[RMDB]
RNA sequence: GGGAACGACUCGAGUAGAGUCGAAAAUUGCUCAAAUGAGUAUUCCAAGUCGCACCAGCAAAUGUCAAAAUGCAAACUAAUGCAUAUUUUGGUGCUUGUUUUUGCCAUGCUAAUUUGAGUAAGAAAUAACAUUACUUCACUUCGGUGAAGUAAUGUUAAAAGAAACAACAACAACAAC
Reactivity to 2A3 in 0.01 (KOAc 150mM, MgCl2 10mM, bicine 150mM(pH8.5), 24C), signal-to-noise 1, nucleotides 027 to 126: u040u020g000c000u010c000a030a000a000u030g000a020g030u040a030u130u040c090c020a030a030g040u040c030g000c010a000c000c000a000g030c040a050a040a120u090g040u080c040a100a020a010a020u050g040c020a030a100a040c130u230a130a070u070g000c010a010u030a150u110u100u050u000g010g000u000g000c000u000u040g010u000u020u010u040u010g070c040c000a010u030g000c000u010a010a030u000u010u030g000a010g000u000a010a020g040a040a050a020u060
Reactivity to DMS in 0.01 (KOAc 150mM, MgCl2 10mM, bicine 150mM(pH8.5), 24C), signal-to-noise 1, nucleotides 027 to 126: u000u000g000c020u010c010a000a000a000u000g000a060g020u000a050u050u000c100c040a030a090g010u010c170g010c000a000c040c010a070g030c250a060a060a040u000g000u000c170a030a060a100a030u000g010c030a030a130a120c300u010a090a170u000g000c000a010u000a030u000u000u000u000g010g000u000g000c030u010u000g020u000u000u000u000u010g020c090c090a070u000g000c010u000a070a050u000u000u000g000a030g020u000a010a060g000a090a060a150u000